An RNA of 177 nucleotides, treated with 2A3 and DMS and read out base by base.
[RMDB]
RNA sequence: GGGAACGACUCGAGUAGAGUCGAAAAGAGCAUGUCUUCGGACAUGCUCAAACGAGAAACGGCAAAUAAGCCGAUCCCAGGCGUUCGUACGCCAUACUCGAAAAAGUAUAGUCUUCGGACUAUACAACAUAUUAGUUAAGUUCGCUUAACUAAUAUGAAAAGAAACAACAACAACAAC
Reactivity to 2A3 in 0.01 (KOAc 150mM, MgCl2 10mM, bicine 150mM(pH8.5), 24C), signal-to-noise 9, nucleotides 027 to 126: g010a000g000c000a000u000g000u000c010u050u080c250g060g000a000c000a000u000g000c000u000c000a000a010a000c020g000a000g020a040a140a010c010g000g000c040a060a110a300u200a300a050g000c000c000g000a020u020c000c000c000a010g010g000c020g030u150u300c160g120u300a020c010g000c010c000a020u060a050c010u010c010g060a130a050a010a010a010g000u000a000u000a000g000u000c010u020u060c260g060g000a000c000u000a000u000a000c000a000a000
Reactivity to DMS in 0.01 (KOAc 150mM, MgCl2 10mM, bicine 150mM(pH8.5), 24C), signal-to-noise 8, nucleotides 027 to 126: g010a020g010c000a000u000g010u000c000u000u010c210g020g010a010c000a010u000g000c000u000c000a010a040a090c030g000a020g000a070a090a170c020g010g000c000a090a110a170u010a120a110g010c000c000g000a070u000c000c000c000a210g000g000c010g010u000u010c300g020u010a060c010g000c010c010a060u000a040c010u000c010g000a100a050a080a100a120g000u000a000u000a010g000u000c000u000u010c160g020g000a010c000u000a000u000a000c000a090a140

For DMS the reverse transcriptase was MarathonRT.
It was measured as part of the RMDB library M2PK50.